[RMDB]
RNA sequence: GGGAACGACUCGAGUAGAGUCGAAAAGUCAAGUGUGUGGAAGGUGUGCAUGUUACAUAUUCAACAGUUGUUUGGAAUAUAGACACUGUUAUUGAUGCCGAUGGCACAGAGUUACACCCAACUUCUACAGGUAGUGGAUUGACAUACUGUAUAAGUGCUGAAACUGAUAGUUCGCUAUCAGUUUCAGAAAAGAAACAACAACAACAAC
Reactivity to 2A3 in 0.01 (KOAc 150mM, MgCl2 10mM, bicine 150mM(pH8.5), 24C), signal-to-noise 6, nucleotides 027 to 156: g050u040c050a030a040g040u020g010u000g010u020g140g050a060a080g050g010u050g010u040g040c020a030u060g030u070u090a050c030a050u120a090u040u130c030a010a020c010a040g020u120u060g040u040u150u050g120g050a130a070u180a020u080a070g010a010c010a000c020u010g010u030u040a100u070u100g050a060u050g020c030c060g090a110u120g010g000c020a010c010a020g040a000g000u040u030a020c050a050c030c010c010a020a020c000u010u030c020u010a000c020a030g040g080u140a070g080u070g070g080a160u050u180g020a020c020a040u110a050c040u000g050u020a030u010a080a040g020u050g080
Reactivity to DMS in 0.01 (KOAc 150mM, MgCl2 10mM, bicine 150mM(pH8.5), 24C), signal-to-noise 3, nucleotides 027 to 156: g000u000c040a060a180g010u000g020u020g020u010g000g010a090a090g020g020u010g040u000g000c030a090u000g000u000u010a090c040a060u010a110u000u000c020a040a040c010a040g020u000u010g040u000u000u020g010g010a150a140u000a170u010a140g010a040c010a060c020u000g020u000u000a140u000u000g010a060u000g010c020c010g040a090u000g010g020c020a070c020a080g010a110g030u000u010a080c040a110c000c010c000a070a060c020u000u010c040u000a020c040a040g020g020u000a050g030u000g010g020a250u010u000g020a080c040a050u000a070c030u000g020u000a040u000a040a030g030u000g020